The record gives the reactivity of an RNA of 207 nucleotides to 2A3 and DMS. Values cover nucleotides 27 to 156. For DMS the reverse transcriptase was MarathonRT. It was measured as part of the RMDB library OK3TST. The reactions ran in a buffer of 150 mM KOAc, 10 mM MgCl2 and 150 mM bicine (pH 8.5), at 24 C. For 2A3, 723 sequencing reads were counted.
RNA sequence: GGGAACGACUCGAGUAGAGUCGAAAAUCACAUUCCAGAUGUCUUUCAGCCCCUCCUCCCAUCUCCCUGAGCUUGGCACUUCCCCAGGAGGGCAGCCUGAGGGUCAGGGUCCAUGGGCCGCCUGGGCAUCAGGGGCCUGUGAGUGCCUGGCUCAGAGUACCAUUACAACUUUCGAGUUGUAAUGGUAAAAAGAAACAACAACAACAAC
Reactivity to 2A3 in 0.01 (KOAc 150mM, MgCl2 10mM, bicine 150mM(pH8.5), 24C), signal-to-noise 1, nucleotides 027 to 156: u130c020a000c030a050u080u030c000c000a030g060a190u070g060u030c030u040u200u110c090a070g030c010c010c000c030u070c010c050u000c000c000c000a090u080c100u030c070c000c000u000g000a000g000c030u030u030g000g000c010a000c020u040u080c010c000c020c040a020g000g000a070g000g080g030c010a000g070c010c000u010g010a170g050g040g030u080c080a010g030g040g030u000c000c010a040u020g030g020g020c000c000g170c050c100u080g070g090g030c030a100u120c010a000g010g000g000g000c000c020u020g000u010g050a000g000u010g000c000c000u000g000g000c010u000c000a000g000a000g000
Reactivity to DMS in 0.01 (KOAc 150mM, MgCl2 10mM, bicine 150mM(pH8.5), 24C), signal-to-noise 1, nucleotides 027 to 156: u000c030a100c060a130u000u000c070c100a130g000a050u010g020u010c020u010u000u000c210a080g010c040c010c020c030u000c020c000u030c010c060c010a130u010c070u000c000c000c020u000g010a040g040c050u000u000g010g040c010a040c000u010u000c000c000c020c010a080g000g010a160g000g010g030c080a030g010c020c010u000g010a050g020g040g010u010c090a130g010g020g030u000c010c010a090u000g030g010g020c030c030g060c080c030u000g000g000g020c060a060u000c010a070g000g000g010g030c000c000u000g030u000g000a040g030u000g020c020c010u000g010g050c000u020c000a000g000a120g020